Chemical mapping of a 177-nucleotide RNA with 2A3 and DMS. It was measured as part of the RMDB library OK2TRN.

RNA sequence: GGGAACGACUCGAGUAGAGUCGAAAAUGAAGUCAGUUGUACCGCAGGAUCUUCAUGUGGAGACUCAGAUUCUCCUCACGAUGCUGAGCAGGCUAGCAGAAGGGGAGUUGCUGACGCAGGACUGGCACGAAUAAGCGCAGUUCGCUGCGCUUAUUCGAAAAGAAACAACAACAACAAC
Reactivity to 2A3 in 0.01 (KOAc 150mM, MgCl2 10mM, bicine 150mM(pH8.5), 24C), signal-to-noise 1, nucleotides 027 to 126: u110g020a100a030g040u010c000a000g000u050u060g110u150a140c030c040g000c050a060g030g080a120u030c050u100u070c080a110u080g080u130g040g000a050g000a050c010u000c040a030g030a120u140u020c000u020c000c010u010c000a150c110g060a010u100g000c000u020g060a030g000c040a080g160g000c030u050a010g020c000a000g020a130a030g030g000g040g020a020g040u040u080g000c010u000g010a040c060g010c070a040g060g110a020c000u040g000g000c030a040
Reactivity to DMS in 0.01 (KOAc 150mM, MgCl2 10mM, bicine 150mM(pH8.5), 24C), signal-to-noise 3, nucleotides 027 to 126: u010g000a110a110g030u000c020a060g020u000u000g010u000a090c140c030g000c040a070g000g000a080u010c070u000u010c020a120u010g000u000g000g000a080g010a060c100u010c080a060g000a220u000u010c000u000c000c000u010c010a070c170g010a180u000g000c010u000g000a090g010c080a080g010g010c050u000a090g010c040a010g010a180a060g000g010g000g000a060g010u000u000g010c060u000g010a040c170g010c050a060g010g010a010c030u010g010g010c040a190
Values cover nucleotides 27 to 126. The DMS profile rests on 2,241 reads. The RNA was probed in 150 mM KOAc, 10 mM MgCl2 and 150 mM bicine (pH 8.5) at 24 C.